[RMDB]
Structure probing data (DMS) for a 177-nucleotide construct. The RNA was probed in 150 mM KOAc, 10 mM MgCl2 and 150 mM bicine (pH 8.5) at 24 C.
RNA sequence: GGGAACGACUCGAGUAGAGUCGAAAAUUAAUCAGGACCAAAUGGCUGUAAAGCCCGUAAUGCUCGAAAUGGUCCUAAACAGCCAAAUCGGGCAAAUCGAGCAAUCCCAACGACAGCGACAAAACAAUCGUUAGGAGUAGUUCGCUACUCCUAACGAAAAAGAAACAACAACAACAAC
Reactivity to DMS in 0.01 (KOAc 150mM, MgCl2 10mM, bicine 150mM(pH8.5), 24C), signal-to-noise 2, nucleotides 027 to 126: u000u000a080a030u000c080a080g000g000a080c020c070a050a110a100u010g000g030c000u000g000u020a020a150a150g020c020c000c050g000u000a110a210u000g000c000u000c000g000a000a050a280u000g000g010u000c060c010u020a000a120a120c220a300g000c030c020a020a000a300u000c000g000g000g000c050a030a090a070u000c010g000a020g000c000a080a190u010c050c080c010a070a090c250g000a030c020a010g000c020g020a050c210a060a060a040a030c180a090a080